[RMDB]
RNA sequence: GGGAACGACUCGAGUAGAGUCGAAAAAUAGAGGAAGUAUUAGGAAACUGGGGCACAACAAUAAUACGUGUUCCACAACUUUCAGCGCGGGUGUGUCUUCUUUUCCUGCUUGAGAUAGCGCUAUGUCCGAUCUCAUGAUGUUCGCAUCAUGAGAUCGAAAAGAAACAACAACAACAAC
Reactivity to 2A3 in 0.01 (KOAc 150mM, MgCl2 10mM, bicine 150mM(pH8.5), 24C), signal-to-noise 5, nucleotides 027 to 126: a000u050a000g030a020g020g050a030a020g090u120a130u210u130a060g120g110a070a030a050c070u030g000g000g000g000c010a010c010a050a100c050a030a130u220a160a040u180a140c150g000u000g010u010u000c000c000a000c000a020a030c010u040u070u070c060a040g030c010g000c030g050g030g010u040g020u010g000u030c020u060u010c000u030u070u020u000c010c010u020g020c030u080u080g060a090g040a140u150a050g030c060g000c080u070a050u090g110u020c010
Reactivity to DMS in 0.01 (KOAc 150mM, MgCl2 10mM, bicine 150mM(pH8.5), 24C), signal-to-noise 3, nucleotides 027 to 126: a060u050a050g000a020g010g010a090a030g010u000a070u020u030a060g010g010a080a040a080c260u000g010g000g000g000c020a000c040a090a120c230a140a090u010a160a100u030a080c160g010u020g010u000u010c000c000a030c090a030a110c030u000u000u000c090a060g010c060g000c000g010g000g000u010g000u010g020u000c000u010u000c040u000u000u000u000c000c000u000g010c070u000u000g000a050g010a050u020a040g000c040g000c040u000a060u020g010u040c050